[RMDB]
RNA sequence: GGGAACGACUCGAGUAGAGUCGAAAAGGAUCCUUCGUAGUCAGGAAGGUAACUGCCUCGUGUACAGUUACCUGUGACUAGAAUCGAUGUCAUCGUACACGAGGAUGAUAUCGACUAUUAAGGAUCGCUAGUUCUGAGUAUUCGUACUUAGAACUAGAAAAGAAACAACAACAACAAC
Reactivity to DMS in 0.01 (KOAc 150mM, MgCl2 10mM, bicine 150mM(pH8.5), 24C), signal-to-noise 9, nucleotides 027 to 126: g010g000a010u000c000c000u000u010c190g010u000a010g010u000c010a080g020g010a170a030g010g010u000a000a010c000u000g000c100c030u010c220g010u010g020u010a220c000a020g000u000u000a010c010c010u000g010u000g000a020c010u000a090g000a090a120u000c020g000a010u000g010u000c000a010u000c010g020u010a070c180a100c230g000a070g010g000a020u000g000a010u000a000u000c000g000a020c070u000a080u000u010a030a020g010g010a010u000c000g000
Reactivity to 2A3 in 0.01 (KOAc 150mM, MgCl2 10mM, bicine 150mM(pH8.5), 24C), signal-to-noise 9, nucleotides 027 to 126: g030g000a000u000c010c000u020u040c070g100u030a010g000u000c020a020g110g300a230a030g040g000u010a010a010c010u030g040c010c020u090c110g120u130g030u080a070c020a030g000u010u020a020c000c010u020g010u010g010a010c000u010a050g110a070a070u040c020g010a010u030g010u000c000a010u010c020g110u140a040c130a040c120g080a050g130g000a000u010g000a000u000a000u010c010g010a000c010u030a050u120u090a020a000g000g000a000u000c000g000

The record gives the reactivity of an RNA of 177 nucleotides to DMS and 2A3. It was measured as part of the RMDB library OK2TRN. For DMS the reverse transcriptase was MarathonRT. Conditions: 150 mM KOAc, 10 mM MgCl2 and 150 mM bicine (pH 8.5), 24 C.